[RMDB]
RNA sequence: GGGAACGACUCGAGUAGAGUCGAAAAAGGACUUGUAUAGAGUGUGCUUGAACUACAUGCUUGACCAUAGAAGAAAAUGCAGAUUAAUGCUGCAUUUUAUGACAUAAAAUACAGCAGCGAUAGUUAGAUCCUGUACCACAUUCGUGUGGUACAGGAUAAAAGAAACAACAACAACAAC
Reactivity to 2A3 in 0.01 (KOAc 150mM, MgCl2 10mM, bicine 150mM(pH8.5), 24C), signal-to-noise 5, nucleotides 027 to 126: a010g060g030a030c030u070u050g080u150a150u100a130g060a040g060u090g020u050g100c040u050u090g040a020a010c010u030a000c010a020u020g010c000u070u050g020a040c000c060a040u040a080g170a160a010g040a020a070a000a000u020g000c000a010g010a060u100u300a130a040u300g070c000u000g000c000a000u000u000u000u000a040u010g030a020c000a010u120a080a120a090a040u210a050c090a040g000c000a010g020c050g080a070u020a020g050u040u010a060g000
Reactivity to DMS in 0.01 (KOAc 150mM, MgCl2 10mM, bicine 150mM(pH8.5), 24C), signal-to-noise 5, nucleotides 027 to 126: a050g000g000a070c050u000u000g010u000a130u030a110g010a070g000u000g010u010g040c030u010u010g010a060a030c030u010a040c030a050u000g000c000u010u000g010a080c230c070a060u020a060g000a190a110g020a040a010a000a010u000g000c000a010g000a050u020u050a090a080u040g010c000u000g000c000a000u000u000u000u000a020u010g000a270c130a130u010a030a040a030a090u020a120c120a040g000c000a010g010c110g010a080u000a030g010u000u000a040g010
The data come from the RNA Mapping Database (RMDB), libraries RFM100 and RFMREP. An RNA of 177 nucleotides, treated with 2A3 and DMS and read out base by base.